[RMDB]
RNA sequence: GGGAACGACUCGAGUAGAGUCGAAAAGGCGUCUUCGCUGCCUCGGCCGCCAUGCACUGACCGGUAGCCGCCGUAAUUGCGGCAUUGUUCCCAUAAAAGGAUGUGGGUGUGGGUGCCGAAGUAGCAGCGGGAUUAUACUAUUCGUAGUAUAAUCCCGAAAAGAAACAACAACAACAAC
Reactivity to DMS in 0.01 (KOAc 150mM, MgCl2 10mM, bicine 150mM(pH8.5), 24C), signal-to-noise 7, nucleotides 027 to 126: g020g010c110g010u000c050u000u000c130g020c000u000g010c010c030u000c020g010g010c020c050g020c010c010a060u000g010c010a040c020u000g010a160c040c020g010g010u000a140g010c000c010g020c000c200g010u000a130a120u030u010g000c000g000g010c000a120u010u010g000u000u000c000c000c000a120u010a040a070a110a120g000g010a160u010g010u000g000g000g020u000g020u000g000g000g000u000g010c010c010g010a020a040g020u000a040g020c010a140g010
Reactivity to 2A3 in 0.01 (KOAc 150mM, MgCl2 10mM, bicine 150mM(pH8.5), 24C), signal-to-noise 8, nucleotides 027 to 126: g090g040c050g100u040c050u140u110c080g020c010u010g010c010c000u010c010g000g000c020c030g060c040c010a080u070g010c020a020c070u070g110a090c030c030g030g050u070a040g010c000c000g000c010c010g040u060a050a090u190u170g000c000g000g000c010a010u030u200g010u030u020c010c000c010a020u150a020a130a000a010g080g030a060u150g040u130g210g000g020u030g000u030g010g030g040u080g000c000c010g010a020a010g000u030a010g000c010a010g030
An RNA of 177 nucleotides, treated with DMS and 2A3 and read out base by base. The 2A3 profile rests on 17,510 reads.